This 177-nucleotide RNA was probed chemically with DMS and 2A3. The DMS profile rests on 5,137 reads. Source: RMDB library OK2TST, as collected in RNAgym.
[RMDB]
RNA sequence: GGGAACGACUCGAGUAGAGUCGAAAAGGACGUUGGCAUCGCUGUGGUCACGAUAGGCUUGCAUAAUCGGCGCCACCGCGCUGGCUCUGUCAGUGCUACCCAGCGCACGAACCGCCGAGGCAAUUAGGUAUUCAGUUGAGUUCGCUCAACUGAAUACAAAAGAAACAACAACAACAAC
Reactivity to DMS in 0.01 (KOAc 150mM, MgCl2 10mM, bicine 150mM(pH8.5), 24C), signal-to-noise 5, nucleotides 027 to 126: g010g000a050c070g010u010u000g000g020c020a030u000c060g020c040u000g010u010g010g000u000c060a110c090g020a070u000a070g010g020c110u000u000g030c060a080u010a130a100u000c020g000g020c030g020c010c050a120c300c110g000c000g020c020u000g000g010c030u000c060u010g000u010c100a100g010u010g010c060u000a070c200c020c010a020g000c020g000c020a060c060g000a100a160c300c020g010c010c010g010a040g000g010c070a050a080u010u000a100g010
Reactivity to 2A3 in 0.01 (KOAc 150mM, MgCl2 10mM, bicine 150mM(pH8.5), 24C), signal-to-noise 3, nucleotides 027 to 126: g070g000a020c070g030u100u090g030g000c030a040u030c050g010c060u040g030u100g070g020u060c040a010c040g060a040u100a080g080g000c050u040u060g000c040a050u090a170a130u200c010g000g000c000g000c040c010a010c020c020g000c010g000c000u010g000g000c020u040c020u070g120u120c080a110g170u090g110c040u030a030c000c020c000a000g030c000g000c010a000c040g040a020a030c040c020g000c010c000g000a010g000g000c020a030a110u190u050a140g080
For DMS the reverse transcriptase was MarathonRT. The reactions ran in a buffer of 150 mM KOAc, 10 mM MgCl2 and 150 mM bicine (pH 8.5), at 24 C.